[RMDB]
RNA sequence: GGGAACGACUCGAGUAGAGUCGAAAAUAGUCUCAUAGGUUAAGCCAUGCAUGUGCAAGCGAAGCGUAAGUGGAGCGGCGCAAGGCUCAGUAACGGGCGAGUAUUUGAUCUCCUAGAGUGGAUAUCCGCACUGCGGAUAAUUCGUUAUCCGCAGUGCAAAAGAAACAACAACAACAAC
Reactivity to 2A3 in 0.01 (KOAc 150mM, MgCl2 10mM, bicine 150mM(pH8.5), 24C), signal-to-noise 4, nucleotides 027 to 126: u060a000g040u000c030u010c050a100u120a050g080g050u110u090a090a010g020c030c030a040u070g010c030a030u060g020u030g020c070a140a090g010c020g050a030a010g000c010g020u100a100a070g040u050g050g020a030g020c000g010g000c020g000c000a000a060g050g000c000u030c050a060g060u070a050a010c080g010g050g000c020g050a020g040u040a080u050u030u080g060a040u020c000u000c030c010u020a010g040a040g110u090g090g010a040u040a010u100c030c010
Reactivity to DMS in 0.01 (KOAc 150mM, MgCl2 10mM, bicine 150mM(pH8.5), 24C), signal-to-noise 4, nucleotides 027 to 126: u050a100g000u000c010u000c020a050u030a070g010g030u000u020a070a070g000c020c030a100u000g000c060a070u040g020u000g000c020a120a090g020c010g010a300a170g040c020g000u020a090a130g020u030g010g010a300g010c040g000g020c080g000c040a030a050g000g010c000u000c140a080g010u020a040a070c070g000g000g010c100g010a100g000u010a070u020u020u000g010a050u020c040u020c040c030u000a080g000a080g020u000g000g000a080u020a040u010c090c120
Chemical mapping of a 177-nucleotide RNA with 2A3 and DMS. For 2A3 the reverse transcriptase was SuperScript II with manganese. The RNA was probed in 150 mM KOAc, 10 mM MgCl2 and 150 mM bicine (pH 8.5) at 24 C. In probing experiments dimethyl sulfate is read out at A N1 and C N3, which are open when not base-paired. The data come from the RNA Mapping Database (RMDB), libraries RFM100 and RFMREP.